[RMDB]
RNA sequence: GGGAACGACUCGAGUAGAGUCGAAAAGGCAGGACUUACCAAGUCUGGGGGCCGAUGAGGGUUGGCUCAAAGUAGGGUUUUGACUUGAAAACUCAAGCUGUGACCCCAAAACGAUGGAGGUCAAUGAAAAAUCCAUCUGCCUUCGGGCAGAUGGAAAUCGGUAUUACGUGUUCGCACGUAAUACCGAAAAAGAAACAACAACAACAAC
Reactivity to 2A3 in 0.01 (KOAc 150mM, MgCl2 10mM, bicine 150mM(pH8.5), 24C), signal-to-noise 1, nucleotides 027 to 156: g070g000c050a010g000g000a040c010u040u070a160c090c070a110a030g010u000c040u060g120g000g000g000g000c030c130g010a030u090g070a060g020g090g060u050u020g030g000c000u000c030a130a100a000g050u060a040g040g000g110u040u010u070u050g030a020c000u000u180g060a060a110a060a000c090u040c000a070a030g050c060u140g050u190g160a060c000c000c000c000a000a050a090a000c040g060a030u080g010g010a040g050g000u000c020a030a150u160g040a030a050a100a000a000u000c000c000a010u010c000u030g000c000c000u000u060c080g040g000g000c000a000g000a000u000g000g040a000a000a000
Source: RMDB library M2RFPK, as collected in RNAgym. Chemical mapping of a 207-nucleotide RNA with 2A3. Reactivities are given for positions 27 through 156. For 2A3 the reverse transcriptase was SuperScript II with manganese. The RNA was probed in 150 mM KOAc, 10 mM MgCl2 and 150 mM bicine (pH 8.5) at 24 C. High 2A3 reactivity points to a flexible backbone, as in loops and unpaired stretches.